[RMDB]
RNA sequence: GGGAACGACUCGAGUAGAGUCGAAAAGUAUGAUCCUUCGGGAUCAUACAAAUAAACUCGCCUAUAGCCAGGCGAGAACCAAAGCGGCUAAAGCAAUGGUAAAAAUCGGAUACUUCGGUAUCCGAAAGUUAGGGUGAUAGUUCGCUAUCACCCUAACAAAAGAAACAACAACAACAAC
Reactivity to DMS in 0.01 (KOAc 150mM, MgCl2 10mM, bicine 150mM(pH8.5), 24C), signal-to-noise 2, nucleotides 027 to 126: g010u000a010u000g010a000u000c000c000u000u010c150g020g010g020a010u000c000a030u000a010c000a070a070a100u000a060a080a130c000u010c000g000c030c000u010a100u010a120g030c170c140a050g000g050c010g010a010g000a030a090c020c010a020a020a270g000c020g000g020c130u030a090a120a200g010c080a040a180u010g000g010u000a020a100a020a070a130u000c000g000g000a010u000a010c000u000u020c160g020g000u000a000u000c000c010g010a000a020a090
Reactivity to 2A3 in 0.01 (KOAc 150mM, MgCl2 10mM, bicine 150mM(pH8.5), 24C), signal-to-noise 2, nucleotides 027 to 126: g000u000a000u010g000a010u010c000c000u030u060c190g100g010g000a010u010c000a000u010a000c000a010a010a000u070a000a040a010c000u000c000g010c000c010u110a100u090a140g110c070c060a000g000g020c010g000a000g020a010a000c000c000a030a000a000g030c020g080g020c140u210a130a000a020g000c000a010a070u060g060g000u110a050a070a010a010a050u030c000g000g000a000u000a010c000u030u060c210g100g000u000a010u000c000c000g000a010a010a010